The data come from the RNA Mapping Database (RMDB), library OK3TST. An RNA of 207 nucleotides, treated with 2A3 and read out base by base. As a SHAPE reagent, 2A3 marks flexible, mostly unpaired nucleotides at the ribose 2'-OH. For 2A3 the reverse transcriptase was SuperScript II with manganese. For 2A3, 850 sequencing reads were counted. Values cover nucleotides 27 to 156.
RNA sequence: GGGAACGACUCGAGUAGAGUCGAAAAACAUUCUUGAGUGUCUGUGAUGUGCUAGGCGUGCGGCUGGAUGGUGCUAUUGUGUGCAAAUCACCAUGCCUCAGGUCUUUGACAGGCUUGUCAUGCACUGAGGAAGUUCAGGCUCAGAGAGGACCAGCGAGUCAGUCGAUUAGUUCGCUAAUCGACUGACAAAAGAAACAACAACAACAAC
Reactivity to 2A3 in 0.01 (KOAc 150mM, MgCl2 10mM, bicine 150mM(pH8.5), 24C), signal-to-noise 2, nucleotides 027 to 156: a000c070a160u080u110c040u050u090g030a020g040u030g050u060c050u050g030u040g030a120u070g010u020g040c020u070a020g000g070c070g040u050g030c010g020g040c040u030g100g030a080u050g020g050u040g060c100u080a060u120u210g090u000g000u050g120c060a010a000a150u080c010a030c010c020a030u100g000c000c010u020c000a000g000g020u000c000u090u030u060g050a020c040a020g120g100c120u160u110g000u020c000a000u060g000c020a040c130u040g000a000g070g000a050a000g000u060u110c030a020g040g020c020u030c020a010g020a000g000a030g030g030a060c000c050a060g090c020g060a070